[RMDB]
RNA sequence: GGGAACGACUCGAGUAGAGUCGAAAAUUGGUAACUAUGCGCCCCCCCUCCAUCAUCCCCAAGGCUGCCCAAACCACCACUGCUGUCAGCAAGCACAUCAGACUCUAGCCUGGACAGUGGCCAGGACGAAUCAGGGUCUAUUCGUAGACCCUGAUUCAAAAGAAACAACAACAACAAC
Reactivity to DMS in 0.01 (KOAc 150mM, MgCl2 10mM, bicine 150mM(pH8.5), 24C), signal-to-noise 2, nucleotides 027 to 126: u030u010g020g010u010a040a120c070u010a080u000g000c090g010c020c020c000c000c000c000c010u000c020c020a030u000c090a090u000c040c000c030c080a120a110g010g000c010u000g020c000c030c030a020a030a140c040c050a050c010c010a060c050u000g010c070u000g010u010c060a060g020c070a040a050g020c040a070c070a050u010c070a070g000a080c060u010c040u010a110g000c040c000u000g000g000a090c050a090g000u020g020g000c010c030a030g010g020a120c190